[RMDB]
RNA sequence: GGGAACGACUCGAGUAGAGUCGAAAAGAUAUGGAGAAUGGAACCUUUUGACGGAUGGUGGUCGGAAACGACCAGAAGUCCGAUAAGGUUCAUUCUCCUAAGUCAAAGGUCAAGUUCGCUUGACCAACUACGUAGUCCUCUUCGGAGGACUACGUAGAAAAGAAACAACAACAACAAC
Reactivity to 2A3 in 0.01 (KOAc 150mM, MgCl2 10mM, bicine 150mM(pH8.5), 24C), signal-to-noise 2, nucleotides 027 to 126: g020a010u080a010u200g010g000a030g050a070a020u140g160g210a060a130c000c040u040u130u170u300g280a180c240g030g000a000u080g070g290u030g000g000u020c000g000g000a050a030a050c010g010a000c010c010a020g030a060a020g030u020c000c000g020a070u050a130a010g030g000u000u000c010a000u000u010c000u000c000c000u010a010a000g030u000c020a030a080a060g000g000u000c000a000a010g020u010u150c230g020c250u000u000g000a000c000c000a010a000
Reactivity to DMS in 0.01 (KOAc 150mM, MgCl2 10mM, bicine 150mM(pH8.5), 24C), signal-to-noise 2, nucleotides 027 to 126: g010a020u000a300u010g000g010a030g000a020a030u010g040g050a000a010c010c000u000u000u010u010g020a210c160g000g000a060u000g000g000u000g050g030u030c010g010g010a130a060a130c000g000a010c010c000a010g000a300a280g000u000c000c010g000a120u000a030a030g000g010u000u000c030a000u000u000c010u000c000c000u000a000a060g000u000c050a050a070a190g000g000u000c000a000a040g000u000u030c300g030c030u000u000g020a010c000c000a070a100